[RMDB]
RNA sequence: GGGAACGACUCGAGUAGAGUCGAAAAGAUAUGGAGCGAAUCGAGCAUCGAUCUGUGGGAAGUCUCGGAAACGAGUCACCCACAGGGAGCUCGACGCUCCUAAGUCAAACCUUCGUUCGCGAAGGAACAGCUUAUUUGUCUUCGGACAAAUAAGCUGAAAAGAAACAACAACAACAAC
Reactivity to DMS in 0.01 (KOAc 150mM, MgCl2 10mM, bicine 150mM(pH8.5), 24C), signal-to-noise 2, nucleotides 027 to 126: g000a060u000a300u000g020g010a010g000c000g010a080a190u000c000g010a030g020c000a290u000c220g010a040u010c000u000g020u020g000g010g000a130a090g040u010c000u010c000g010g020a090a110a130c000g000a010g000u010c010a140c000c000c000a000c020a000g000g000g010a010g040c000u000c000g000a010c030g000c000u020c000c000u020a040a050g020u000c020a140a080a200c010c000u000u000c000g000u010u000c130g000c000g020a010a010g000g000a130a130
Reactivity to 2A3 in 0.01 (KOAc 150mM, MgCl2 10mM, bicine 150mM(pH8.5), 24C), signal-to-noise 2, nucleotides 027 to 126: g050a020u070a060u170g010g010a020g000c000g110a190a300u070c010g000a000g000c010a100u300c040g040a060u040c010u010g030u030g000g060g040a300a220g080u040c010u000c000g000g070a050a060a030c010g000a000g030u060c090a090c050c010c010a010c010a010g010g030g000a010g010c000u010c010g030a000c020g000c000u000c010c000u010a050a010g000u000c020a050a030a200c000c000u000u020c020g020u040u100c260g000c060g140a000a000g010g040a040a070

Conditions: 150 mM KOAc, 10 mM MgCl2 and 150 mM bicine (pH 8.5), 24 C. This 177-nucleotide RNA was probed chemically with DMS and 2A3. DMS adducts were read by reverse transcription with MarathonRT. Reactivities are given for positions 27 through 126. Reactivities are rounded to 0.1 and cut off at 0 and 3. It was measured as part of the RMDB library TTRDEL. For 2A3, 2,505 sequencing reads were counted.